Structure probing data (DMS and 2A3) for a 177-nucleotide construct. High DMS reactivity at an A or C suggests that its Watson-Crick edge is free. The 2A3 profile rests on 3,805 reads.
RNA sequence: GGGAACGACUCGAGUAGAGUCGAAAACUACAAGUUCAAUCGCGAGGCCUUUGACUGGAUCCUGGGCGAGAUCGAGACCCGCUUCCAUGCAGCGCUUGCGUACCCGGGGGAGAUGAUCGGCACGGUGUCACUUCCCUUAUUUCGAUAAGGGAAGUGAAAAAGAAACAACAACAACAAC
Reactivity to DMS in 0.01 (KOAc 150mM, MgCl2 10mM, bicine 150mM(pH8.5), 24C), signal-to-noise 5, nucleotides 027 to 126: c050u000a120c200a090a110g010u010u000c090a070a110u010c040g030c050g010a070g010g010c040c050u000u000u020g010a070c090u000g000g000a080u000c030c020u010g020g000g000c040g000a070g000a070u000c050g010a150g000a120c060c030c040g000c050u000u000c020c040a070u010g010c070a070g020c090g010c030u020u000g000c040g010u010a100c040c020c050g010g000g000g000g010a140g010a070u010g010a050u000c050g000g010c030a060c080g010g010u010g000
Reactivity to 2A3 in 0.01 (KOAc 150mM, MgCl2 10mM, bicine 150mM(pH8.5), 24C), signal-to-noise 4, nucleotides 027 to 126: c040u140a070c020a120a080g050u040u110c030a090a090u070c080g010c030g140a070g040g040c000c020u100u140u150g090a120c080u030g040g020a030u050c000c020u070g030g050g020c010g020a070g000a080u120c080g040a030g090a170c020c010c020g030c020u090u000c020c010a060u110g030c010a020g000c050g000c050u070u110g030c030g040u070a110c010c010c030g000g000g000g010g000a090g020a080u120g010a040u050c020g030g020c030a020c050g060g020u060g030